Chemical mapping of a 177-nucleotide RNA with DMS and 2A3. Values are in units of 0.01, from 0 to 300, in steps of 10. The reactions ran in a buffer of 150 mM KOAc, 10 mM MgCl2 and 150 mM bicine (pH 8.5), at 24 C. For 2A3, 3,987 sequencing reads were counted.
[RMDB]
RNA sequence: GGGAACGACUCGAGUAGAGUCGAAAAGCUAUGAUGACUGGUAAAACGAUAUUGCCUUAUUCACAUCGUAAGAAUUCGUCCAGAUGACACUAUCUCCUUCCGGCUUUAACCCUGUGGAUUAAGGCCGCAUAGGAAUAGGCUUCGGCCUAUUCCUAUGAAAAGAAACAACAACAACAAC
Reactivity to DMS in 0.01 (KOAc 150mM, MgCl2 10mM, bicine 150mM(pH8.5), 24C), signal-to-noise 3, nucleotides 027 to 126: g030c090u000a040u000g020a060u000g000a120c060u000g000g020u020a030a070a120a080c110g010a060u010a080u000u000g020c060c000u000u000a050u000u010c130a070c120a050u000c100g000u000a030a090g000a050a120u000u000c050g010u010c020c020a050g000a090u000g010a070c060a040c050u000a060u010c060u000c010c050u010u010c140c020g000g010c010u000u000u000a020a010c020c000c080u000g000u020g030g020a020u010u000a020a020g000g020c010c090g000
Reactivity to 2A3 in 0.01 (KOAc 150mM, MgCl2 10mM, bicine 150mM(pH8.5), 24C), signal-to-noise 3, nucleotides 027 to 126: g020c010u030a020u140g030a020u040g050a060c060u040g010g020u070a040a080a070a020c080g050a060u050a080u170u080g050c020c000u060u040a110u120u120c080a030c020a120u070c040g010u040a080a020g040a080a070u050u060c030g030u000c030c000a010g020a110u090g030a020c000a010c080u070a070u070c040u040c060c000u100u060c040c010g000g000c020u020u000u020a020a020c010c000c060u130g180u260g080g000a070u020u020a010a010g020g000c000c000g010